[RMDB]
The record gives the reactivity of an RNA of 177 nucleotides to DMS. The data come from the RNA Mapping Database (RMDB), library TTRINS. The DMS profile rests on 1,220 reads. DMS adducts were read by reverse transcription with MarathonRT. The reactions ran in a buffer of 150 mM KOAc, 10 mM MgCl2 and 150 mM bicine (pH 8.5), at 24 C.

RNA sequence: GGGAACGACUCGAGUAGAGUCGAAAAGAUAUGGAAGUAAGUGGCAAGCGGAGCAUCGAUCUUACGUAACAUCUUGUCGGAAACGACAAGUGGUAAGGGAGCUCCCUUGCCACUUACUUCCUAAGUCGUUAUGAUCGUGGUUCGCCACGAUCAUAACAAAAGAAACAACAACAACAAC
Reactivity to DMS in 0.01 (KOAc 150mM, MgCl2 10mM, bicine 150mM(pH8.5), 24C), signal-to-noise 1, nucleotides 027 to 126: g010a030u010a300u010g010g040a000a000g000u000a000a020g050u000g000g000c000a030a000g000c250g020g000a020g010c000a300u000c200g010a090u010c000u010u000a000c000g010u000a040a140c240a010u000c000u000u000g020u000c000g000g020a110a110a210c000g000a010c000a040a000g020u000g010g000u000a000a020g000g020g000a010g030c010u020c000c000c010u000u000g000c020c000a000c000u000u000a020c000u000u000c010c000u000a020a110g000u000c080